This 177-nucleotide RNA was probed chemically with DMS and 2A3. Values cover nucleotides 27 to 126. For 2A3, 807 sequencing reads were counted. For DMS the reverse transcriptase was MarathonRT. The reactions ran in a buffer of 150 mM KOAc, 10 mM MgCl2 and 150 mM bicine (pH 8.5), at 24 C.
RNA sequence: GGGAACGACUCGAGUAGAGUCGAAAAUCUAUUCUUGAAGAAUGGGCUAUGAAGAAUAACAAGAGACUUGACAUUCAUACUGGUGAGUAUAAUGUCAACAAGGUAGUUUAUGUCCUAGUCGACGGACGGUAUGGCACUGUUUCGACAGUGCCAUACCAAAAGAAACAACAACAACAAC
Reactivity to DMS in 0.01 (KOAc 150mM, MgCl2 10mM, bicine 150mM(pH8.5), 24C), signal-to-noise 1, nucleotides 027 to 126: u030c090u000a030u000u000c010u000u080g060a260a270g070a080a020u060g020g000g000c000u000a080u060g000a050a080g000a100a010u040a000a130c120a120a000g020a110g000a210c300u000u030g000a010c000a000u000u000c220a000u000a000c000u010g000g080u050g000a070g050u000a000u050a000a000u000g000u000c000a000a090c180a140a030g000g020u000a050g000u000u000u000a000u030g000u000c000c000u000a000g080u000c070g000a030c280g000g020a080c280
Reactivity to 2A3 in 0.01 (KOAc 150mM, MgCl2 10mM, bicine 150mM(pH8.5), 24C), signal-to-noise 2, nucleotides 027 to 126: u090c000u000a020u020u090c020u000u240g140a160a150g060a050a010u080g010g010g000c010u050a040u070g060a030a170g020a120a060u110a040a090c140a120a090g110a000g040a150c110u010u000g000a000c000a000u000u090c060a000u000a000c000u060g300g030u260g000a020g020u010a000u020a000a040u030g020u030c000a000a000c020a070a050g090g030u050a060g000u080u020u100a070u090g040u020c000c000u060a120g060u110c050g020a070c050g040g010a030c070